[RMDB]
Structure probing data (2A3) for a 207-nucleotide construct. The 2A3 profile rests on 504 reads.
RNA sequence: GGGAACGACUCGAGUAGAGUCGAAAAUUUCACCGCCGACACCGUUAUCGUUGACCAAGUCCCUGAUGAAAUUGGUGCUGGCGACACAAUUAAGGUCAUGCUAUCUACGGGUCGCCUUGAAGCUAGAACGAUUCAGUCGAUUACCGGAAAUUCCGUAGUAGUAAAACCGGUUCGCCGGUUUUACUACAAAAGAAACAACAACAACAAC
Reactivity to 2A3 in 0.01 (KOAc 150mM, MgCl2 10mM, bicine 150mM(pH8.5), 24C), signal-to-noise 1, nucleotides 027 to 156: u090u100u140c040a020c010c000g030c040c000g020a040c020a060c060c000g030u020u060a050u060c080g040u030u110g010a060c050c070a080a020g090u100c000c020c000u010g020a040u030g030a130a110a080u130u290g040g000u040g070c000u010g010g060c010g000a000c040a010c010a060a140u160u180a180a040g020g020u060c060a110u070g070c020u050a070u050c010u020a000c040g010g010g050u000c010g010c010c060u040u170g060a070a010g000c020u060a080g150a300a000c070g040a060u120u090c010a000g030u010c010g010a000u020u120a040c000c010g040g000a010a040a110u030u030c010c020g030u040a010
The RNA was probed in 150 mM KOAc, 10 mM MgCl2 and 150 mM bicine (pH 8.5) at 24 C. Source: RMDB library OK3TST, as collected in RNAgym.